RNA sequence: GGGAACGACUCGAGUAGAGUCGAAAAUAGUCAACAUAACCCGGUCAGGUUUUUCAGUUGGGAUGGCCUUUCCCUGGCCCAUAGCAGAGAAUCCAAAGCAAAUCCUUUGUUGACCUCUUCCUCCCAACAUCCCUUAUCUCUUCGGAGAUAAGGGAUGAAAAGAAACAACAACAACAAC
Reactivity to 2A3 in 0.01 (KOAc 150mM, MgCl2 10mM, bicine 150mM(pH8.5), 24C), signal-to-noise 2, nucleotides 027 to 126: u070a010g020u020c000a020a000c010a080u100a120a090c020c020c050g020g070u130c070a020g060g030u010u040u050u120u100c050a030g000u080u000g010g030g140a180u060g070g000c040c000u010u080u050c040c020c030u020g010g020c000c000c000a070u120a050g000c050a010g010a000g010a050a030u080c040c040a090a030a010g060c050a040a080a140u070c030c070u050u040u050g000u020u030g030a040c020c000u060c030u080u020c020c000u030c030c010c000a020a070
Reactivity to DMS in 0.01 (KOAc 150mM, MgCl2 10mM, bicine 150mM(pH8.5), 24C), signal-to-noise 2, nucleotides 027 to 126: u010a110g000u010c040a030a050c020a010u040a140a090c020c030c050g000g040u000c050a300g000g000u000u000u000u010u000c040a090g030u000u000g010g010g020a110u010g000g010c030c010u010u010u010c040c060c030u000g000g000c000c030c050a110u020a080g010c080a050g000a070g010a070a080u000c030c030a030a110a160g000c070a050a060a050u010c150c100u010u000u010g000u010u000g000a030c040c040u000c110u000u000c030c020u010c010c010c010a060a180